[RMDB]
RNA sequence: GGGAACGACUCGAGUAGAGUCGAAAACGUAAGACGGGGAAUAACGAGGGAUCAAACCCAAACGCGCUAGCCCGGAUUCUCCCGCCUGAGAGAUGAACGGCGAAUUUUAAUUCAGGCUAGUCAUUCAUUAGCGUGUCGGUUCGCAGGUGGGUGGCGACACAGCCACUUUCUUCGGAAAGUGGCUGUGAAAAGAAACAACAACAACAAC
Reactivity to 2A3 in 0.01 (KOAc 150mM, MgCl2 10mM, bicine 150mM(pH8.5), 24C), signal-to-noise 1, nucleotides 027 to 156: c030g040u030a050a000g060a030c040g000g010g000g070a030a110u120a110a020c070g000a060g040g040g020a060u100c050a030a060a130c030c010c050a060a100a000c070g000c000g000c030u010a000g020c000c010c010g020g000a000u060u000c020u010c020c030c010g010c000c010u040g010a030g000a000g010a040u090g000a100a010c050g010g010c060g040a020a020u050u070u090u300a080a070u060u010c010a010g000g000c000u000a000g010u010c020a030u170u000c040a060u010u160a020g000c000g000u030g110u090c020g030g050u120u100c010g000c030a030g010g030u080g030g000g020u010g030g000c000g020a010
Record summary
This 207-nucleotide RNA was probed chemically with 2A3. The 2A3 profile rests on 690 reads.